This 177-nucleotide RNA was probed chemically with 2A3 and DMS. DMS adducts were read by reverse transcription with MarathonRT. Values cover nucleotides 27 to 126. It was measured as part of the RMDB library M2PK50. The 2A3 profile rests on 1,794 reads.
RNA sequence: GGGAACGACUCGAGUAGAGUCGAAAACAGUGAGACUUCGGUCUCACUGAAAUGACUAUGCACCAUGACGAGGACGAAGAUGCGGAGGACGACGAGGAACAAAAACAGCAAGGUUCGCCUUGCUGAAUCCUCCAAGAUAGUUCGCUAUCUUGGAGGAAAAAGAAACAACAACAACAAC
Reactivity to 2A3 in 0.01 (KOAc 150mM, MgCl2 10mM, bicine 150mM(pH8.5), 24C), signal-to-noise 1, nucleotides 027 to 126: c020a000g020u010g000a000g000a020c010u040u120c250g060g000u010c010u000c000a000c010u020g010a020a000a010u060g010a010c040u050a020u160g010c000a030c010c030a090u090g030a050c050g020a010g060g000a000c040g060a080a010g040a030u110g030c010g000g030a010g060g000a020c020g000a000c020g020a040g000g080a060a000c080a030a150a010a000a010c010a000g050c000a010a010g030g000u000u050c220g080c060c000u020u000g020c010u000g000a000a010
Reactivity to DMS in 0.01 (KOAc 150mM, MgCl2 10mM, bicine 150mM(pH8.5), 24C), signal-to-noise 4, nucleotides 027 to 126: c010a000g000u000g010a020g000a000c000u000u020c210g050g010u000c010u000c000a000c000u010g000a010a060a120u020g020a110c060u010a080u000g010c080a080c040c030a080u000g010a080c090g010a080g020g010a070c080g000a090a060g010a070u000g010c050g020g000a070g000g010a050c070g000a060c080g000a070g020g010a040a080c110a040a080a090a090a160c000a000g000c010a010a010g000g020u000u010c240g000c000c000u000u000g000c010u010g000a050a090